[RMDB]
The record gives the reactivity of an RNA of 177 nucleotides to DMS and 2A3. Values are in units of 0.01, from 0 to 300, in steps of 10. For DMS, 555 sequencing reads were counted. The data come from the RNA Mapping Database (RMDB), library M2PK50. For 2A3 the reverse transcriptase was SuperScript II with manganese.
RNA sequence: GGGAACGACUCGAGUAGAGUCGAAAAGCCAUGAGUUUCGACUCAUGGCAAAAGCGCCUCAGCGCUACGAUGCAAGCGCAAGCGCGUCCAUCGUAAAUGACAAAAUUCUCGGGUUCGCCCGAGAAAAGAGCUAUAGAGGGUUCGCCCUCUAUAGCUCAAAAGAAACAACAACAACAAC
Reactivity to DMS in 0.01 (KOAc 150mM, MgCl2 10mM, bicine 150mM(pH8.5), 24C), signal-to-noise 1, nucleotides 027 to 126: g020c000c000a000u000g010a060g040u000u000u010c150g000a020c010u000c000a000u010g020g030c000a010a000a080a270g010c040g000c030c040u010c300a170g010c010g050c020u020a020c100g000a110u010g050c070a060a040g000c010g000c030a240a190g010c040g000c040g030u000c150c000a180u000c100g010u000a010a130a080u000g010a090c080a110a020a160a130u010u000c000u000c000g000g010g000u000u060c180g040c000c000c000g020a000g010a000a010a070a070
Reactivity to 2A3 in 0.01 (KOAc 150mM, MgCl2 10mM, bicine 150mM(pH8.5), 24C), signal-to-noise 1, nucleotides 027 to 126: g010c010c010a000u010g010a000g000u100u050u170c200g030a010c000u020c000a000u000g000g010c010a000a000a000a020g000c010g020c030c050u130c190a030g040c000g030c020u020a000c020g100a080u180g060c100a060a030g030c010g020c070a090a070g150c060g000c020g100u010c040c000a060u040c010g010u070a080a150a150u190g020a030c050a010a090a050a090u020u060c000u000c000g030g000g020u040u020c200g070c010c010c000g020a000g010a000a000a000a000